[RMDB]
RNA sequence: GGGAACGACUCGAGUAGAGUCGAAAAGUCGCCGCGUCUACAUCAACGCCCAGCGCGGGCGAGGGAUGCGUCCUACGGGGGUGCCCCAUUCGCCGGCAUGGAAGAGGACGGCAAGAUUGCCGCGACGCAUUACCUCAUCGUUCGCGAUGAGGUAAUGAAAAGAAACAACAACAACAAC
Reactivity to DMS in 0.01 (KOAc 150mM, MgCl2 10mM, bicine 150mM(pH8.5), 24C), signal-to-noise 8, nucleotides 027 to 126: g020u000c010g040c010c230g020c020g000u000c010u000a170c080a090u000c020a080a070c070g010c250c010c010a100g010c150g030c070g010g010g010c010g010a030g000g010g000a070u000g010c010g010u000c000c010u010a110c150g050g020g010g010g020u000g000c020c020c010c020a170u010u000c040g010c020c030g000g020c010a070u000g000g010a160a210g000a080g000g010a050c020g010g010c100a080a060g000a050u000u010g050c020c150g010c010g000a030c040g000
Reactivity to 2A3 in 0.01 (KOAc 150mM, MgCl2 10mM, bicine 150mM(pH8.5), 24C), signal-to-noise 7, nucleotides 027 to 126: g010u010c010g000c020c010g000c010g000u000c010u040a070c010a090u050c020a070a060c030g030c000c000c020a090g060c300g030c100g190g000g000c000g010a030g040g040g010a040u170g010c010g020u020c000c000u050a160c160g200g020g000g020g010u030g010c020c010c000c010a130u110u060c030g010c020c000g050g000c020a030u040g030g040a080a050g030a040g070g030a020c020g020g020c030a020a020g060a090u150u300g010c020c020g000c000g010a010c010g000
An RNA of 177 nucleotides, treated with DMS and 2A3 and read out base by base. Reactivities are given for positions 27 through 126. It was measured as part of the RMDB library OK2TRN. In probing experiments dimethyl sulfate is read out at A N1 and C N3, which are open when not base-paired. The 2A3 profile rests on 16,748 reads.